[RMDB]
RNA sequence: GGGAACGACUCGAGUAGAGUCGAAAAAUCUGAUACACAUGUUCACGUGGGCACAUGCACACACACAUGCACGACAUGGGGAGUGUACACUUACUGACCUACACGAGCAUCAGGAGUAUCAUUAACUCUAAAUGAAUAUUAGGUUGAACCACAUGAACAUUAAUCGUAGGUUCGCCUACGAUUAAUGAAAAGAAACAACAACAACAAC
Reactivity to DMS in 0.01 (KOAc 150mM, MgCl2 10mM, bicine 150mM(pH8.5), 24C), signal-to-noise 3, nucleotides 027 to 156: a050u000c030u000g030a150u010a060c030a100c030a030u000g010u010u000c010a110c080g060u010g000g020g010c070a100c160a030u000g030c000a040c020a030c050a120c050a010c010a000u010g010c060a200c260g010a220c030a020u010g010g000g050g010a110g060u000g030u000a030c020a030c050u000u000a080c090u010g010a110c040c000u010a040c050a150c080g000a100g020c020a030u010c080a150g030g010a000g030u000a080u010c080a130u000u010a070a070c020u010c000u000a070a050a090u010g000a090a110u000a040u000u000a050g010g010u000u000g010a110a080c010c010a030c080a050u000g020a050a250
Reactivity to 2A3 in 0.01 (KOAc 150mM, MgCl2 10mM, bicine 150mM(pH8.5), 24C), signal-to-noise 9, nucleotides 027 to 156: a000u040c030u030g010a010u030a030c040a010c010a050u020g010u010u000c040a040c130g000u010g010g030g000c010a090c010a090u030g010c030a010c000a010c000a000c000a000c000a030u010g020c050a050c300g210a120c090a040u020g000g000g050g000a230g020u010g010u040a040c060a010c060u090u160a080c020u070g130a300c000c000u010a010c020a010c110g010a010g010c000a000u030c040a050g040g020a090g040u010a010u040c030a020u070u120a060a040c020u010c040u130a090a110a120u150g080a110a030u150a110u190u080a050g040g030u020u040g060a080a040c040c030a050c060a150u160g090a050a000